[RMDB]
RNA sequence: GGGAACGACUCGAGUAGAGUCGAAAAUGCCCGGUUCACAAUAGGUUUUGCGCUCCUAUGAGAAUCUAAGGCUUCCACUGAUAUGACAGGAGGCAGAGCCCAGGCGGGAAUACUAGUGAUGGGGAGUGGCUGUAAAUACAGAUGAAGCUCCGCCACCCGUAUAUCCCCGAUUCGUCGGGGAUAUACGAAAAGAAACAACAACAACAAC
Reactivity to DMS in 0.01 (KOAc 150mM, MgCl2 10mM, bicine 150mM(pH8.5), 24C), signal-to-noise 2, nucleotides 027 to 156: u000g010c030c010c000g040g030u000u000c030a090c070a200a120u010a050g010g030u000u000u000u000g030c070g030c070u010c010c020u010a140u020g010a230g000a100a030u000c020u000a140a080g000g010c060u000u010c080c110a130c140u010g010a160u000a070u010g040a080c030a110g000g000a100g020g010c060a100g000a060g040c000c000c010a020g020g010c000g000g000g010a080a040u000a080c120u000a100g000u000g020a120u000g020g010g000g020a100g060u000g030g020c020u000g020u010a070a080a230u010a170c090a110g000a160u010g000a040a100g000c010u000c000c010g040c010c000a000c080c010
Reactivity to 2A3 in 0.01 (KOAc 150mM, MgCl2 10mM, bicine 150mM(pH8.5), 24C), signal-to-noise 3, nucleotides 027 to 156: u120g020c000c000c000g030g080u130u130c040a040c050a200a170u100a130g000g040u040u020u040u080g050c220g100c030u020c000c020u090a070u080g050a070g090a160a050u030c070u100a120a030g060g000c030u090u060c040c010a070c090u140g070a070u070a070u270g110a120c080a120g020g030a010g010g000c010a010g020a010g040c000c050c020a010g070g030c030g000g030g010a030a020u060a150c050u060a090g050u010g160a130u050g030g010g010g010a010g010u040g040g000c000u000g000u070a110a150a140u220a100c020a000g060a040u110g120a120a020g000c000u000c000c010g060c010c010a010c010c010
Source: RMDB library OK3TST, as collected in RNAgym. The record gives the reactivity of an RNA of 207 nucleotides to DMS and 2A3. For 2A3, 1,127 sequencing reads were counted. Conditions: 150 mM KOAc, 10 mM MgCl2 and 150 mM bicine (pH 8.5), 24 C. 2A3 adducts were read by reverse transcription with SuperScript II with manganese. Values cover nucleotides 27 to 156. For DMS, 2,403 sequencing reads were counted.